RNA sequence: GGGAACGACUCGAGUAGAGUCGAAAAUUGGUCAACUGUUUACCUUCUCUCCCAGGCGCCACUGGACGACGCAAGACUGCAAUUGUUCUAUCUAUCCCGGCCAUAUAACGGGUCAUCGCAUGGCAUGGGAUAUGAUGAUGAACUGGUCCCCUACGGCUAUCCUUAGGAACUUCGGUUCCUAAGGAUAAAAAGAAACAACAACAACAAC
Reactivity to DMS in 0.01 (KOAc 150mM, MgCl2 10mM, bicine 150mM(pH8.5), 24C), signal-to-noise 2, nucleotides 027 to 156: u000u010g010g010u000c030a080a120c060u000g010u000u000u000a040c020c020u000u000c050u020c040u000c020c020c020a240g020g000c000g000c060c010a140c070u010g000g020a130c030g010a040c050g000c030a210a100g020a050c020u000g030c070a070a120u000u010g010u010u000c030u000a110u000c020u000a050u000c010c000c020g020g000c010c020a040u010a070u000a060a040c040g000g020g020u000c180a040u010c020g020c050a060u010g000g000c010a070u030g090g000g010a020u000a010u000g030a050u000g020a100u000g020a020a020c030u000g030g010u000c010c000c000c020u010a030c060g020g030c070
Reactivity to 2A3 in 0.01 (KOAc 150mM, MgCl2 10mM, bicine 150mM(pH8.5), 24C), signal-to-noise 3, nucleotides 027 to 156: u090u080g010g020u050c050a070a030c190u060g050u180u170u080a030c020c000u090u070c090u010c010u000c030c010c000a030g090g030c040g010c000c000a030c050u050g020g010a030c040g020a020c050g050c100a030a040g050a090c080u090g030c030a040a250u080u090g010u020u000c010u020a010u000c000u010a000u010c000c010c000g000g000c020c030a020u110a000u020a090a070c050g070g000g160u100c080a090u240c020g050c040a010u010g000g020c140a160u140g020g010g010a010u020a010u080g010a010u030g060a090u130g010a000a000c010u030g000g020u020c000c010c000c010u040a040c060g030g000c010

Chemical mapping of a 207-nucleotide RNA with DMS and 2A3. Source: RMDB library OK3TST, as collected in RNAgym. Conditions: 150 mM KOAc, 10 mM MgCl2 and 150 mM bicine (pH 8.5), 24 C. Values cover nucleotides 27 to 156.